This 177-nucleotide RNA was probed chemically with 2A3 and DMS. Conditions: 150 mM KOAc, 10 mM MgCl2 and 150 mM bicine (pH 8.5), 24 C. Reactivities are rounded to 0.1 and cut off at 0 and 3.
RNA sequence: GGGAACGACUCGAGUAGAGUCGAAAAAAUAUAGUGCUUGGUUCCUAGUAGGUGCUCAGUAAGUGUUUGUGACAUAAUUCGUUUAUUGAGCACCUCCUAUCAAUCAAGCACUGUGCUAGGCUCUGGAUCUUCCAAUACUGUUCGCAGUAUUGGAAGAAAAAGAAACAACAACAACAAC
Reactivity to 2A3 in 0.01 (KOAc 150mM, MgCl2 10mM, bicine 150mM(pH8.5), 24C), signal-to-noise 1, nucleotides 027 to 126: a000a010u130a010u030a010g010u000g000c000u010u010g000g020u010u010c020c000u000a000g020u010a010g000g020u010g000c000u010c020a010g010u020a020a010g010u000g050u080u020u040g190u140g160a120c080a130u300a080a050u110u010c000g000u020u010u020a010u000u010g000a000g030c000a000c000c000u000c000c000u020a000u010c010a020a000u000c000a000a010g000c000a010c000u000g000u000g020c010u080a100g050g070c050u040c040u050g040g030a050
Reactivity to DMS in 0.01 (KOAc 150mM, MgCl2 10mM, bicine 150mM(pH8.5), 24C), signal-to-noise 2, nucleotides 027 to 126: a090a050u020a010u000a010g020u000g000c010u000u000g010g000u000u010c040c010u000a010g000u000a030g010g010u000g000c000u010c000a010g010u000a020a020g010u000g010u000u020u000g000u000g040a230c290a090u010a080a020u000u000c010g010u000u000u010a000u000u010g000a020g010c000a000c000c000u000c040c010u010a000u000c040a000a010u010c000a010a020g010c000a000c000u010g000u000g010c100u000a110g010g010c170u000c020u000g020g010a300